RNA sequence: GGGAACGACUCGAGUAGAGUCGAAAAGAUAUGGACCCUGAUAGGGAGCUGUUGUUCGGAAACGAACAUCAGCGAAGAACUAUAGGGUCCUAAGUCAAAGGUGCAGAAACUUCGGUUUCUGCACCAAGAUCGUCUAAUGGUUCGCCAUUAGACGAUCAAAAGAAACAACAACAACAAC
Reactivity to 2A3 in 0.01 (KOAc 150mM, MgCl2 10mM, bicine 150mM(pH8.5), 24C), signal-to-noise 2, nucleotides 027 to 126: g010a000u000a000u040g000g000a000c000c000c000u040g230a040u070a100g070g100g100a210g020c010u010g000u020u030g010u020u000c010g010g010a010a010a010c000g000a000a000c010a010u000c010a000g000c000g030a060a040g060a000a000c010u010a010u120a070g030g000g000u000c000c000u000a010a000g010u000c000a060a090a100g000g000u010g010c010a000g010a010a020a010c050u150u250c300g070g020u000u000u020c000u000g000c000a000c010c000a000a000
Reactivity to DMS in 0.01 (KOAc 150mM, MgCl2 10mM, bicine 150mM(pH8.5), 24C), signal-to-noise 2, nucleotides 027 to 126: g000a050u000a040u010g020g000a010c010c000c010u000g020a070u000a000g010g010g020a070g030c000u000g010u010u000g030u000u010c010g030g000a020a000a040c000g000a020a000c000a000u000c010a010g010c000g010a130a100g000a150a300c020u000a010u010a020g010g000g010u010c000c020u000a010a070g010u000c000a110a140a160g000g030u000g010c000a000g000a010a000a030c000u000u010c220g050g010u000u000u010c010u000g000c020a000c010c010a010a050
This 177-nucleotide RNA was probed chemically with 2A3 and DMS.
DMS (dimethyl sulfate) methylates the pairing face of unpaired adenines and cytosines.
It was measured as part of the RMDB library TTRDES.
2A3 adducts were read by reverse transcription with SuperScript II with manganese.